[RMDB]
RNA sequence: GGGAACGACUCGAGUAGAGUCGAAAAGAACAUCAAAAUCGCUGACUUUGGCUUUUCGAACGAGUUCACACCCGGCUCAAAGCUGGACACGUUCUGCGGUAGCCCGCCAUAUGCGGCACCGGAGCUAUACCUUUUAUCCGUUCGCGGAUAAAAGGUAAAAAGAAACAACAACAACAAC
Reactivity to DMS in 0.01 (KOAc 150mM, MgCl2 10mM, bicine 150mM(pH8.5), 24C), signal-to-noise 3, nucleotides 027 to 126: g000a060a070c100a100u020c020a030a060a080a080u000c080g010c130u020g000a060c090u010u000u000g010g010c000u000u000u000u000c060g000a030a110c010g020a040g000u000u000c100a070c270a180c030c030c040g000g030c040u000c090a070a060a130g010c050u000g020g010a040c070a130c110g000u000u010c000u010g020c000g000g020u000a050g060c200c000c020g020c040c210a110u010a090u010g030c020g010g030c040a020c000c010g010g010a050g000c150u000a110
Reactivity to 2A3 in 0.01 (KOAc 150mM, MgCl2 10mM, bicine 150mM(pH8.5), 24C), signal-to-noise 2, nucleotides 027 to 126: g020a050a010c010a070u090c040a030a020a010a130u100c120g070c260u100g020a070c040u100u090u050g040g000c000u010u040u040u030c000g020a050a020c020g040a010g040u130u070c050a010c000a010c040c040c000g030g000c010u050c090a190a120a010g020c020u020g030g000a010c020a010c100g030u070u040c030u040g010c010g000g010u040a060g040c030c100c020g000c030c010a200u140a060u300g020c020g000g000c020a000c000c010g000g040a020g000c030u100a050
Conditions: 150 mM KOAc, 10 mM MgCl2 and 150 mM bicine (pH 8.5), 24 C. Chemical mapping of a 177-nucleotide RNA with DMS and 2A3. Reactivities are given for positions 27 through 126. In probing experiments dimethyl sulfate is read out at A N1 and C N3, which are open when not base-paired.